[RMDB]
RNA sequence: GGGAACGACUCGAGUAGAGUCGAAAAGAGUAGAAAUUCAUAAAAGAUUAUCAAGAAGAGACUGUGUUUCCAUGACAAUGAAUGUGCGAUAUGCUAUAAAGGGCUCUUUAUUCUGGCAGUGCGAACGCAUCCGCCUUGCGUUCGCGCAAGGCGGAUGAAAAGAAACAACAACAACAAC
Reactivity to 2A3 in 0.01 (KOAc 150mM, MgCl2 10mM, bicine 150mM(pH8.5), 24C), signal-to-noise 3, nucleotides 027 to 126: g030a010g010u150a030g070a090a120a100u140u040c120a050u150a190a130a060a040g080a120u150u160a200u210c070a060a170g050a110a050g050a080g040a070c010u100g010u000g060u190u060u040c050c000a030u130g020a000c070a140a020u160g030a060a010u030g100u020g090c050g060a060u100a100u200g000c020u050a010u140a240a150a070g080g020g020c010u000c060u070u130u070a130u170u070c040u000g050g000c020a040g010u010g010c010g070a030a000c050g000
Reactivity to DMS in 0.01 (KOAc 150mM, MgCl2 10mM, bicine 150mM(pH8.5), 24C), signal-to-noise 2, nucleotides 027 to 126: g000a040g000u030a060g000a050a190a110u030u020c050a020u010a060a070a100a250g000a110u030u020a130u050c060a100a070g030a170a040g000a160g000a030c050u020g010u030g030u000u000u010c000c020a060u030g020a060c090a120a060u010g030a030a030u030g020u000g000c060g000a090u020a070u010g020c040u000a120u070a070a010a030g000g000g000c030u000c050u000u000u000a090u000u040c010u000g000g000c070a070g020u000g000c010g020a010a030c190g000